[RMDB]
RNA sequence: GGGAACGACUCGAGUAGAGUCGAAAAGAUAUGGAAGUCAGUCGAGAUCCAUCUCGGAAACGAGAUUGAUCGAUGAGACUACUUCCUAAGUCAAACGAGCUCCAUGGGGUUCGCCCCAUGGAGCUCGGGAUAAUGGCAAGUUCGCUUGCCAUUAUCCAAAAGAAACAACAACAACAAC
Reactivity to DMS in 0.01 (KOAc 150mM, MgCl2 10mM, bicine 150mM(pH8.5), 24C), signal-to-noise 3, nucleotides 027 to 126: g000a020u020a050u020g000g010a020a000g010u010c300a040g010u000c000g000a060g000a000u000c000c090a020u010c010u000c000g010g010a030a010a020c000g010a010g000a010u000u000g000a010u000c000g010a210u010g010a300g000a010c010u020a060c010u000u000c000c000u000a000a050g010u000c010a150a160a300c010g000a020g010c000u000c000c000a000u000g000g000g000g010u000u010c300g010c000c000c010c000a020u010g020g000a000g010c010u000c000g000
Reactivity to 2A3 in 0.01 (KOAc 150mM, MgCl2 10mM, bicine 150mM(pH8.5), 24C), signal-to-noise 1, nucleotides 027 to 126: g000a000u010a020u070g000g010a000a010g020u150c220a000g000u010c180g030a020g000a150u000c000c010a000u000c000u000c000g000g000a000a030a030c000g000a000g010a010u030u020g000a010u010c020g030a160u270g030a010g000a000c010u000a010c000u000u000c000c000u000a020a000g010u010c010a070a100a120c020g010a010g000c030u000c020c010a000u000g030g010g020g040u170u140c250g120c020c000c000c020a000u020g010g000a010g000c000u000c000g000
An RNA of 177 nucleotides, treated with DMS and 2A3 and read out base by base. The reactions ran in a buffer of 150 mM KOAc, 10 mM MgCl2 and 150 mM bicine (pH 8.5), at 24 C. Values are in units of 0.01, from 0 to 300, in steps of 10. For 2A3, 4,458 sequencing reads were counted. It was measured as part of the RMDB library TTRDES. Values cover nucleotides 27 to 126. For 2A3 the reverse transcriptase was SuperScript II with manganese.